[RMDB]
RNA sequence: GGGAACGACUCGAGUAGAGUCGAAAAUGCGGGGCAUUCGCGCUGGCUGAGCGCCGAGGCAAUGGCCGCCAGGCUCAACGAUGUCGGUGUGGGCCGCGCGCGCGGGUUUAGCCUCAACGUCUCGAACCUCUGUAUCCUCGUUCGCGAGGAUACAGAGAAAAGAAACAACAACAACAAC
Reactivity to 2A3 in 0.01 (KOAc 150mM, MgCl2 10mM, bicine 150mM(pH8.5), 24C), signal-to-noise 6, nucleotides 027 to 126: u200g020c090g000g020g020g010c010a030u040u040c040g000c000g020c050u070g070g010c040u120g080a040g100c020g000c000c020g000a010g040g050c050a040a100u070g040g040c000c010g010c060c020a060g000g000c010u040c130a190a300c120g050a080u180g150u220c030g020g040u110g010u050g060g020g000c040c010g020c040g050c010g000c010g000c000g010g010g000u030u070u200a040g040c000c000u000c020a030a050c040g020u020c000u010c020g030a040a040c020
Reactivity to DMS in 0.01 (KOAc 150mM, MgCl2 10mM, bicine 150mM(pH8.5), 24C), signal-to-noise 3, nucleotides 027 to 126: u040g020c190g000g000g020g010c040a140u010u000c050g000c010g000c030u060g000g000c050u020g000a150g010c020g030c000c030g000a040g030g030c040a030a280u000g000g000c000c000g070c170c190a230g010g020c000u020c010a010a010c270g000a130u020g000u000c020g000g030u010g040u000g000g000g010c000c000g010c230g000c180g030c130g000c030g050g000g040u000u030u010a090g000c010c000u000c010a150a150c080g010u000c020u000c000g000a220a200c070
Background
The record gives the reactivity of an RNA of 177 nucleotides to 2A3 and DMS. The reactions ran in a buffer of 150 mM KOAc, 10 mM MgCl2 and 150 mM bicine (pH 8.5), at 24 C. 2A3 is a SHAPE reagent: it acylates the 2'-hydroxyl of flexible nucleotides of all four kinds. It was measured as part of the RMDB library OK1LIB.